[RMDB]
RNA sequence: GGGAACGACUCGAGUAGAGUCGAAAAUGGCAUGUGCUGCAGAGAAAAACACUGCCAAUUUGGAACCACUUUCAUCUAAAUUCAAGAUUGAGGAUUUUUAACCAACAGCUGCUGUAAACUUUCUAGCUUGUGGUGACAACUCAGUUUUCCUCUGCCAGUACGUGGGGUGGUUCGCCACCCCACGUACAAAAGAAACAACAACAACAAC
Reactivity to 2A3 in 0.01 (KOAc 150mM, MgCl2 10mM, bicine 150mM(pH8.5), 24C), signal-to-noise 1, nucleotides 027 to 156: u040g010g000c020a020u150g000u010g000c000u030g000c000a000g040a030g030a040a150a000a030a030c010a030c030u020g000c010c000a030a070u100u030u020g080g000a090a060c100c020a130c130u220u300u230c110a180u010c010u140a150a170a170u220u170c030a070a000g020a130u000u000g000a010g090g050a170u070u050u040u130u150a080a020c000c020a000a130c000a060g090c000u080g010c030u040g090u190a030a120a110c070u190u260u010c130u200a050g020c000u040u090g020u010g010g030u030g010a030c030a040a040c040u070c070a000g030u040u030u030u060c000c010u030c000u030g000c030c000a020

The record gives the reactivity of an RNA of 207 nucleotides to 2A3. The RNA was probed in 150 mM KOAc, 10 mM MgCl2 and 150 mM bicine (pH 8.5) at 24 C. Source: RMDB library OK3TST, as collected in RNAgym.